An RNA of 170 nucleotides, treated with 2A3 and DMS and read out base by base. For DMS, 34,742 sequencing reads were counted. Reactivities are given for positions 27 through 129. Values are in units of 0.01, from 0 to 300, in steps of 10. DMS adducts were read by reverse transcription with MarathonRT. The 2A3 profile rests on 17,837 reads. For 2A3 the reverse transcriptase was SuperScript II with manganese.

RNA sequence: GGGAACGACUCGAGUAGAGUCGAAAAGUGUUACCCUACGGGAACUGCUGAGUGCCCCUGACGUCCAGACCCUCCCCCGUCCGGGAGAAUGGAGAUUCGGGAACGUGAAGCAUGGUGGGGACGAAGCCAAGUAAGCUCUUCGGAGCUUACAAAAGAAACAACAACAACAAC
Reactivity to 2A3 in 0.01 (KOAc 150mM, MgCl2 10mM, bicine 150mM(pH8.5), 24C), signal-to-noise 8, nucleotides 027 to 129: g090u070g110u090u150a240c020c000c000u010a030c040g080g020g150a160a080c060u030g020c010u010g020a030g040u090g050c010c010c000c040u030g040a010c030g250u020c010c000a010g020a060c010c000c000u020c020c000c000c010c030g240u100c020c040g000g010g000a020g010a030a020u020g000g000a020g020a070u080u070c030g000g010g010a040a030c020g060u080g100a030a000g020c010a030u070g100g000u030g000g020g000g000a000c030g040a060a010g040c000c000a040a010
Reactivity to DMS in 0.01 (KOAc 150mM, MgCl2 10mM, bicine 150mM(pH8.5), 24C), signal-to-noise 9, nucleotides 027 to 129: g010u030g030u000u000a120c040c000c010u020a040c000g010g010g000a100a080c120u030g040c000u030g020a260g040u040g010c130c040c000c020u000g020a060c300g060u000c010c030a020g010a170c300c110c000u020c010c020c010c100c190g040u060c100c270g000g000g000a020g010a030a050u050g000g000a030g000a080u000u000c120g050g010g000a150a030c040g000u050g030a230a070g000c000a040u020g020g020u000g010g010g030g010a090c100g000a080a060g030c000c010a110a130